[RMDB]
RNA sequence: GGGAACGACUCGAGUAGAGUCGAAAAAGCCUGUCUCGUAACCGAUGAACCCCGAUACACCUUACCGUCACUUGCUAAUUCAGUCCAUAUACCACCAUCUUCAGCAAACCCCUAUAGGGCACAAAAGAUUAAUAAGACCCUUCGGGGUCUUAUUAAUAAAAGAAACAACAACAACAAC
Reactivity to DMS in 0.01 (KOAc 150mM, MgCl2 10mM, bicine 150mM(pH8.5), 24C), signal-to-noise 4, nucleotides 027 to 126: a130g000c030c010u020g020u020c020u000c050g010u010a100a090c050c030g000a090u020g010a110a100c090c020c000c030g000a090u010a070c090a060c030c020u000u000a110c050c030g000u010c040a040c090u010u020g010c040u010a090a090u020u020c080a010g010u000c020c030a010u020a090u040a110c040c010a060c040c020a060u020c030u000u020c040a080g020c090a090a110a100c050c010c010c010u000a050u020a080g010g000g000c090a030c080a030a050a070a110g010
Reactivity to 2A3 in 0.01 (KOAc 150mM, MgCl2 10mM, bicine 150mM(pH8.5), 24C), signal-to-noise 3, nucleotides 027 to 126: a000g040c010c010u030g050u050c010u000c040g090u080a070a070c000c020g000a020u060g030a030a050c010c010c000c000g010a010u010a060c050a010c000c000u020u080a040c010c020g050u050c010a030c070u020u040g020c020u050a120a080u100u050c030a030g040u010c010c030a020u090a020u040a140c000c020a040c000c000a050u020c040u120u060c000a010g000c030a030a060a110c010c000c000c010u050a070u110a080g020g010g000c060a000c010a060a090a010a010g120
An RNA of 177 nucleotides, treated with DMS and 2A3 and read out base by base.
The reactions ran in a buffer of 150 mM KOAc, 10 mM MgCl2 and 150 mM bicine (pH 8.5), at 24 C.
Values cover nucleotides 27 to 126.
For 2A3 the reverse transcriptase was SuperScript II with manganese.